[RMDB]
Structure probing data (DMS) for a 177-nucleotide construct. For DMS the reverse transcriptase was MarathonRT. For DMS, 1,180 sequencing reads were counted. The data come from the RNA Mapping Database (RMDB), library OK2TRN.
RNA sequence: GGGAACGACUCGAGUAGAGUCGAAAACGCUCAAUGUGCAAGCAGUUCUGGAAGUUGAUGCUUAUCUGAAUAGGUUCCAGAUCCUGAGUUUCUCAUCGAUUAUGGAUUAUUUCAGGGUUAGAGAUCCUGUCUAGGAGGAUUUCGAUCCUCCUAGACAAAAAGAAACAACAACAACAAC
Reactivity to DMS in 0.01 (KOAc 150mM, MgCl2 10mM, bicine 150mM(pH8.5), 24C), signal-to-noise 1, nucleotides 027 to 126: c210g040c060u000c060a070a030u000g050u010g030c090a080a040g000c050a050g010u000u010c060u000g000g010a070a120g010u000u000g020a100u000g010c010u000u010a150u010c050u000g000a050a080u010a080g000g030u000u000c020c010a140g000a020u000c010c070u000g030a040g000u000u000u010c040u000c010a030u000c230g000a050u000u010a260u010g000g000a040u010u000a060u010u000u000c010a030g030g020g020u000u000a060g000a110g000a090u010c020c050